[RMDB]
RNA sequence: GGGAACGACUCGAGUAGAGUCGAAAACACUACUAGCUUCACUGCUCCAUGUACCGUUGUCUAUACUUAUUGGUACUUUUACUAGCGUUGGGCUUGCAAUACCUAGAUUGAGGUCUAUAUUAGCUACUGUACUUGAUUUCUUCGGAAAUCAAGUACAAAAAGAAACAACAACAACAAC
Reactivity to 2A3 in 0.01 (KOAc 150mM, MgCl2 10mM, bicine 150mM(pH8.5), 24C), signal-to-noise 2, nucleotides 027 to 126: c020a010c020u160a000c010u020a040g030c010u090u090c070a030c130u070g010c000u000c050c010a100u050g030u030a020c000c040g040u040u060g070u100c090u150a200u060a250c030u120u110a090u100u180g000g000u000a030c000u000u030u050u070a090c050u020a000g020c030g020u040u010g000g030g000c000u010u040g040c010a020a050u020a080c000c020u050a110g040a210u000u060g040a020g010g030u000c020u070a170u000a050u200u060a040g000c010u060a040c060
Reactivity to DMS in 0.01 (KOAc 150mM, MgCl2 10mM, bicine 150mM(pH8.5), 24C), signal-to-noise 3, nucleotides 027 to 126: c080a110c100u020a040c100u010a050g020c030u000u000c090a040c090u020g020c030u010c060c050a060u000g030u000a030c040c020g020u010u000g020u010c260u010a100u010a090c100u000u020a060u010u010g020g010u000a050c020u000u000u000u000a070c160u000a030g010c060g030u000u000g000g010g020c030u000u010g010c040a040a040u020a070c100c070u000a070g000a140u000u000g000a080g010g000u000c030u010a050u000a090u000u000a150g010c050u000a060c300
Chemical mapping of a 177-nucleotide RNA with 2A3 and DMS. For 2A3, 1,677 sequencing reads were counted. The reactions ran in a buffer of 150 mM KOAc, 10 mM MgCl2 and 150 mM bicine (pH 8.5), at 24 C. The data come from the RNA Mapping Database (RMDB), library OK2TST.